[RMDB]
RNA sequence: GGGAACGACUCGAGUAGAGUCGAAAAUGUUUACGUACGUUAUCAAAGCGAUAGGCGAUAGGUCGCACAAUUUGAUCUCUGGUAUCCUCUUUAAGGAGCGAUUGAUAAACCAUCGCAAUAUCCUCUGAUAAAUCCUUCCUUUCGAGGAAGGAUUUAUAAAAGAAACAACAACAACAAC
Reactivity to DMS in 0.01 (KOAc 150mM, MgCl2 10mM, bicine 150mM(pH8.5), 24C), signal-to-noise 3, nucleotides 027 to 126: u020g000u000u000u000a090c210g020u000a080c160g020u000u000a030u010c030a020a070a050g020c130g010a030u000a070g010g010c020g000a050u000a100g040g010u000c060g030c160a280c050a020a100u000u000u000g010a050u000c040u010c040u010g020g020u000a080u010c070c080u000c120u000u000u010a130a170g000g000a040g010c050g000a000u000u000g000a100u000a100a100a050c040c020a020u000c000g010c000a090a080u000a040u000c010c020u000c090u010g000
Reactivity to 2A3 in 0.01 (KOAc 150mM, MgCl2 10mM, bicine 150mM(pH8.5), 24C), signal-to-noise 2, nucleotides 027 to 126: u080g020u000u080u140a070c100g040u060a020c030g030u070u010a010u020c060a010a050a030g060c100g030a010u030a040g070g020c020g010a010u050a120g000g030u020c020g020c040a030c040a030a030u020u020u160g130a210u050c050u000c020u020g050g000u140a170u120c000c040u080c070u040u120u180a140a070g020g000a010g020c000g040a030u000u040g080a080u210a140a030a050c010c060a000u060c010g060c020a010a000u030a040u020c000c010u050c020u000g030
Structure probing data (DMS and 2A3) for a 177-nucleotide construct. For DMS the reverse transcriptase was MarathonRT. The RNA was probed in 150 mM KOAc, 10 mM MgCl2 and 150 mM bicine (pH 8.5) at 24 C. For 2A3, 976 sequencing reads were counted. It was measured as part of the RMDB library OK2TST. Reactivities are given for positions 27 through 126.